[RMDB]
RNA sequence: GGGAACGACUCGAGUAGAGUCGAAAACCCGCGGCUUAAGGUACGUACGCCCAUCCGAGAGGAUGACAUCGCUAGCAGUGCCUGCCGAGAAGCGGUGUGACGCCCUGGCUUCAGGCCGGGGCAGGGUAUUACGGAACUGGCUUGUGGCGGCCAAGCGGUCAUACCUCAUGUUCGCAUGAGGUAUGACAAAAGAAACAACAACAACAAC
Reactivity to DMS in 0.01 (KOAc 150mM, MgCl2 10mM, bicine 150mM(pH8.5), 24C), signal-to-noise 1, nucleotides 027 to 156: c000c000c050g060c050g010g000c030u010u020a100a060g000g000u000a070c000g000u000a020c290g020c040c010c020a010u000c000c030g010a300g020a300g080g000a020u010g000a060c000a110u000c000g000c010u000a100g010c020a090g020u010g000c180c030u000g030c080c050g020a100g020a110a070g010c010g030g000u000g000u010g000a160c050g020c000c010c000u000g010g000c000u000u030c180a250g020g030c020c020g020g000g020g060c000a000g050g000g010u000a070u000u010a110c010g010g010a070a050c020u000g020g010c040u010u000g030u000g000g020c020g000g050c010c030a050a090g020c090g000
Reactivity to 2A3 in 0.01 (KOAc 150mM, MgCl2 10mM, bicine 150mM(pH8.5), 24C), signal-to-noise 3, nucleotides 027 to 156: c010c000c010g030c050g070g030c020u060u120a150a020g020g000u020a020c010g000u000a000c020g020c010c010c000a020u010c000c000g090a090g010a040g090g000a010u000g020a000c010a040u020c010g020c020u020a040g010c050a050g050u040g160c010c060u090g020c010c010g040a070g060a060a000g000c040g000g000u020g010u010g010a040c110g020c000c000c020u010g010g000c030u180u160c240a230g140g010c040c000g000g000g060g000c000a000g000g000g010u040a040u100u120a040c010g000g020a090a040c030u050g030g000c000u020u080g040u060g050g000c010g000g020c010c000a030a010g060c020g040